[RMDB]
RNA sequence: GGGAACGACUCGAGUAGAGUCGAAAACAUGCACGAAGAGUAUGCAGAUAAGGACUCUUUCAAACAAUCUCCUGCAACAGUACGGGAGGUGUUCUGAUGUCUGACUACCUGAAAGUGCUGCAAGCAAUCAAAAGUUGCCCUAAGACUUUCCAGUCCACCAAAGACAGGUAUUCGUACCUGUCUUUGGAAAAGAAACAACAACAACAAC
Reactivity to 2A3 in 0.01 (KOAc 150mM, MgCl2 10mM, bicine 150mM(pH8.5), 24C), signal-to-noise 6, nucleotides 027 to 156: c040a060u130g000c000a010c020g070a100a040g080a040g050u060a060u240g000c000a000g050a030u050a060a070g020g010a020c020u050c000u130u300u200c200a120a120a060c040a050a110u020c010u000c010c000u050g040c100a220a150c040a280g090u240a060c020g000g000g000a000g000g000u020g010u030u010c020u030g080a110u190g040u000c000u010g050a230c010u020a020c000c010u020g040a160a110a030g010u020g020c000u000g000c010a020a000g000c000a000a010u080c020a060a130a040a090g010u010u000g010c000c000c010u030a030a010g110a110c040u060u020u000c020c010a010g060u030c040c030a020
Reactivity to DMS in 0.01 (KOAc 150mM, MgCl2 10mM, bicine 150mM(pH8.5), 24C), signal-to-noise 3, nucleotides 027 to 156: c030a070u010g040c010a040c010g010a170a300g020a170g030u010a040u000g000c000a050g000a100u000a180a230g030g030a060c080u000c100u000u000u010c070a120a070a070c070a070a040u000c010u020c000c010u020g010c000a090a170c150a210g010u000a060c010g030g000g010a040g050g030u000g000u000u000c060u010g000a130u030g020u000c020u000g010a150c040u000a040c010c020u000g010a080a120a260g020u000g010c010u000g000c050a150a080g000c030a010a080u000c040a100a110a090a290g000u000u000g000c020c040c080u000a120a240g000a080c090u000u000u010c030c020a030g020u000c080c070a230

Record summary:
This 207-nucleotide RNA was probed chemically with 2A3 and DMS. Source: RMDB library OK3TST, as collected in RNAgym. The RNA was probed in 150 mM KOAc, 10 mM MgCl2 and 150 mM bicine (pH 8.5) at 24 C.